[RMDB]
RNA sequence: GGGAACGACUCGAGUAGAGUCGAAAAAUGAGCCAGGCAGGGGUGCCCCAGCAGCACCAUGGCCCGAGCGAGGGGGGUGGGCAUGGACAUGCUGUCCACGGCGUGGUGCCCGGUGCUCCACACACCCCACAGUGCCUGGGUUCGCCCAGGCACUGUGAAAAGAAACAACAACAACAAC
Reactivity to DMS in 0.01 (KOAc 150mM, MgCl2 10mM, bicine 150mM(pH8.5), 24C), signal-to-noise 1, nucleotides 027 to 126: a110u010g010a180g010c010c000a050g000g050c030a070g070g000g020g000u000g000c050c010c040c170a130g040c160a090g000c030a020c010c010a050u000g000g000c030c010c040g040a090g000c050g010a170g000g010g040g040g020g020u000g000g000g000c030a040u000g000g000a060c050a080u000g000c140u010g000u000c020c020a140c090g010g000c090g010u030g020g000u010g010c030c070c120g000g000u000g010c010u010c010c100a080c030a300c090a100c010c000c010

About this RNA
The record gives the reactivity of an RNA of 177 nucleotides to DMS. It was measured as part of the RMDB library OK2TRN.